Source: RMDB library TTRDEL, as collected in RNAgym. This 177-nucleotide RNA was probed chemically with DMS and 2A3. Reactivities are given for positions 27 through 126. For DMS, 5,069 sequencing reads were counted. The RNA was probed in 150 mM KOAc, 10 mM MgCl2 and 150 mM bicine (pH 8.5) at 24 C.
RNA sequence: GGGAACGACUCGAGUAGAGUCGAAAAGAUAUGGAUGGAGCGAUGAGUAUAUAUCGGAAACGAUAUGAUACGAGCUCUGUCCUAAGUCAAAGGAUAUCACAUCACGUUCGCGUGAUGUGAUAUCCAACCGUAUCUAUCUCUUCGGAGAUAGAUACGGAAAAGAAACAACAACAACAAC
Reactivity to DMS in 0.01 (KOAc 150mM, MgCl2 10mM, bicine 150mM(pH8.5), 24C), signal-to-noise 4, nucleotides 027 to 126: g000a040u010a300u010g010g000a000u000g020g010a010g010c000g010a130u010g000a210g010u000a010u000a040u000a000u010c010g000g000a120a070a250c000g010a010u000a000u000g000a010u000a000c000g010a130g000c000u000c010u000g010u000c000c000u000a010a080g020u000c060a060a100a100g010g000a020u000a000u000c000a000c000a010u000c000a010c000g030u010u000c260g030c000g020u000g000a000u000g010u000g000a000u000a000u000c000c000a010a050
Reactivity to 2A3 in 0.01 (KOAc 150mM, MgCl2 10mM, bicine 150mM(pH8.5), 24C), signal-to-noise 3, nucleotides 027 to 126: g020a020u070a050u150g010g000a020u010g010g010a000g020c050g180a300u170g090a140g110u010a010u010a000u000a000u020c000g000g000a080a080a010c010g010a000u010a010u110g300a020u030a020c020g000a020g000c000u000c000u000g000u020c000c000u020a110a030g070u040c060a110a070a080g010g000a000u010a010u010c000a000c000a000u000c000a010c000g020u100u080c300g040c010g110u060g000a000u000g000u000g000a000u000a000u030c000c000a000a000